[RMDB]
RNA sequence: GGGAACGACUCGAGUAGAGUCGAAAAAGCAAACCCGCCAGCACCAACUGAGGUGCCGAGGAGCACGUUUGUGUGGAACUGGCCGUCAGGCAGAGAGGAUAAAACAAAAGGCCAGCAAACCCUCUCAUCAUCGGUAAUGAUUCGUCAUUACCGAUGAAAAAGAAACAACAACAACAAC
Reactivity to DMS in 0.01 (KOAc 150mM, MgCl2 10mM, bicine 150mM(pH8.5), 24C), signal-to-noise 5, nucleotides 027 to 126: a130g010c050a050a060a120c020c050c040g010c030c010a080g010c070a060c010c000a110a090c210u010g000a130g000g020u000g010c000c030g020a100g010g000a120g020c020a030c090g000u000u000u000g020u000g010u010g010g010a100a110c020u000g010g000c020c050g010u000c130a100g020g000c070a080g000a060g010a040g010g000a180u000a060a070a080a080c140a060a050a120a090g010g020c010c010a060g000c100a050a090a100c070c010c010u010c030u000c030a210
Reactivity to 2A3 in 0.01 (KOAc 150mM, MgCl2 10mM, bicine 150mM(pH8.5), 24C), signal-to-noise 3, nucleotides 027 to 126: a000g080c050a050a060a020c040c010c050g010c050c020a000g000c000a010c000c010a090a140c110u210g050a080g060g010u030g000c020c000g110a190g090g040a060g010c020a020c070g100u020u140u140g060u030g000u040g060g000a060a070c010u010g010g000c010c000g110u120c060a030g000g090c060a020g020a010g010a020g090g000a090u140a210a180a040a000c040a000a180a040a010g060g000c010c020a010g000c030a010a020a070c010c020c010u040c020u000c010a050
Overview:
The data come from the RNA Mapping Database (RMDB), library OK2TRN. Chemical mapping of a 177-nucleotide RNA with DMS and 2A3. For 2A3, 2,808 sequencing reads were counted. The RNA was probed in 150 mM KOAc, 10 mM MgCl2 and 150 mM bicine (pH 8.5) at 24 C. DMS adducts were read by reverse transcription with MarathonRT.